[RMDB]
RNA sequence: GGGAACGACUCGAGUAGAGUCGAAAACAAUGGACGAAAGUCUGACGGAGCAACGCCGCGUGAGCGAAGAAGGCCUUCGGGUCGUAAAGCUCUGUUGUCAGGGAAGAACAAGUGCCAUUCGAAUAGGAUCCAAAGAUAGAUUCGUCUAUCUUUGGAUAAAAGAAACAACAACAACAAC
Reactivity to DMS in 0.01 (KOAc 150mM, MgCl2 10mM, bicine 150mM(pH8.5), 24C), signal-to-noise 9, nucleotides 027 to 126: c130a060a040u000g000g010a030c010g000a150a120a130g010u000c010u000g000a120c020g010g000a110g010c020a060a100c120g020c110c070g010c130g010u010g000a110g010c010g010a050a110g010a160a260g000g000c010c010u000u010c170g030g010g020u000c000g010u000a020a100a300g000c010u000c000u010g010u010u000g010u000c030a090g010g000g020a090a080g000a060a060c090a080a090g020u010g010c010c010a050u000u000c100g010a090a100u010a090g000g000
Reactivity to 2A3 in 0.01 (KOAc 150mM, MgCl2 10mM, bicine 150mM(pH8.5), 24C), signal-to-noise 9, nucleotides 027 to 126: c020a000a030u030g000g000a000c010g060a160a050a020g080u000c000u010g010a010c010g030g020a070g010c010a050a050c040g040c070c020g090c090g120u140g060a060g000c010g000a050a050g040a030a020g100g000c010c000u030u080c190g090g000g000u020c010g000u030a040a020a000g000c000u000c020u040g100u120u080g010u000c020a020g030g030g080a090a070g030a090a030c060a120a040g050u110g250c000c010a020u040u040c040g040a100a110u110a190g100g050